[RMDB]
RNA sequence: GGGAACGACUCGAGUAGAGUCGAAAACGUGUUACUACGGUAACACGAACGAAGAACGUACGCGUUCUUCGAAUAUUAAAAGAACAUAAAAAAGAACUAUCGUUCGCGAUAGUUCAGACGUCGCUUCGGCGACGUCAGAGACAUCGUGAGAUGUCUCAGAGUUACUUCGGUAACUCACCACGCGUACGCGCGUGGAAGGGAAACAACAGGAGGGGGCCACGUGUGGUGCCGUCCGCGCCCCCUAUGUUGUAACAGAAGCACCACCAAACUCGCUCUUCGGAGCGAGUAAAAGAAACAACAACAACAAC
Reactivity to DMS in 0.01 (KOAc 150mM, MgCl2 10mM, bicine 150mM(pH8.5), 24C), signal-to-noise 1, nucleotides 027 to 266: c010g000u010g000u000u000a010c000u000a130c160g050g000u000a000a000c030a000c020g020a110a180c010g000a030a010g020a010a010c000g060u010a080c170g060c020g060u000u000c010u000u010c040g020a160a080u040a130u030u010a040a070a070a170g060a240a160c070a060u050a010a060a120a090a150a080g000a000a000c000u000a010u000c000g000u000u050c220g070c000g020a000u000a000g000u000u000c000a060g010a010c000g030u000c000g060c010u000u030c250g070g010c000g030a010c010g020u000c000a000g010a040g000a000c010a000u010c000g020u000g020a120g000a000u010g000u000c000u000c000a040g030a010g000u000u000a000c000u000u010c300g020g000u010a000a030c000u010c000a200c040c000a010c020g030c000g030u000a030c140g030c000g000c000g000u010g000g000a090a110g000g010g030a200a100a150c020a010a020c050a070g000g020a030g030g000g010g000g020c030c070a020c030g000u000g020u040g000g000u000g020c050c000g010u000c200c140g020c250g010c000c000c000c000c000u000a000u000g010u010u000g000u000a040a060c150a110g000a120a060g010c010a000c020c000a000c010c300a030a100
Reactivity to 2A3 in 0.01 (KOAc 150mM, MgCl2 10mM, bicine 150mM(pH8.5), 24C), signal-to-noise 2, nucleotides 027 to 266: c010g000u000g000u020u000a020c010u020a020c240g150g000u000a000a000c000a000c030g020a060a000c000g010a000a000g000a000a000c000g000u070a030c200g040c040g150u000u000c000u000u050c010g000a000a090u220a080u090u190a100a110a040a040g110a100a040c050a090u300a160a190a000a000a000a100g000a000a000c000u000a000u010c020g030u050u080c300g040c000g090a010u000a000g000u010u000c010a000g000a000c000g000u000c020g010c010u070u150c190g080g000c040g000a000c000g000u000c000a000g010a000g000a000c000a000u000c000g020u010g040a000g000a000u000g000u010c000u000c010a000g000a000g000u000u000a010c000u020u020c220g060g000u000a000a000c000u020c000a020c000c000a010c000g000c000g020u030a060c300g010c000g000c010g180u010g000g030a030a130g060g010g020a050a180a000c020a020a010c020a050g170g200a080g090g090g000g000g000c020c000a030c010g050u050g000u000g080g000u030g010c040c000g020u050c020c110g040c010g000c000c010c000c000c000u000a020u140g000u000u010g020u020a080a020c030a080g080a160a040g040c010a000c040c010a000c010c000a110a050

This 307-nucleotide RNA was probed chemically with DMS and 2A3.
For DMS the reverse transcriptase was MarathonRT.
For 2A3, 2,379 sequencing reads were counted.
Source: RMDB library POS240, as collected in RNAgym.